The data come from the RNA Mapping Database (RMDB), library M2PK50. An RNA of 177 nucleotides, treated with 2A3 and DMS and read out base by base. For 2A3 the reverse transcriptase was SuperScript II with manganese.
RNA sequence: GGGAACGACUCGAGUAGAGUCGAAAAGAAUGCCCAUUCGUGGGCAUUCCACCGCAGCGAAGCCGAAAGGCAUUUUAUGCGUACGCUGGCGAAAGCGUAAAAAAGCUCCACUUUUCGAAGUGGAGAACACAUACGAAUUUUUCGAAAUUCGUAUGUGAAAAGAAACAACAACAACAAC
Reactivity to 2A3 in 0.01 (KOAc 150mM, MgCl2 10mM, bicine 150mM(pH8.5), 24C), signal-to-noise 5, nucleotides 027 to 126: g010a000a000u000g000c000c010c010a010u030u070c220g070u020g000g000g000c000a000u000u000c000c000a040c010c020g000c010a020g010c030g040a050a010g000c000c010g050a090a030a010g010g010c000a000u010u020u010u040a080u060g010c000g000u020a010c010g010c010u020g080g020c100g090a220a070a010g010c010g010u080a040a050a000a000a020a030g020c000u000c000c000a010c000u040u040u080u130c230g060a020a000g000u000g010g000a000g000a010a010
Reactivity to DMS in 0.01 (KOAc 150mM, MgCl2 10mM, bicine 150mM(pH8.5), 24C), signal-to-noise 8, nucleotides 027 to 126: g000a010a010u000g010c000c000c000a050u000u010c190g030u010g010g010g010c000a000u000u000c000c050a160c100c010g010c040a030g010c190g010a030a060g010c000c000g000a100a070a160g010g010c010a050u000u000u000u010a140u010g000c010g010u000a030c010g010c010u000g010g020c160g000a090a100a050g010c000g000u000a000a040a060a070a070a110g000c010u000c000c000a010c000u000u000u000u020c160g010a010a010g010u000g000g000a000g000a040a080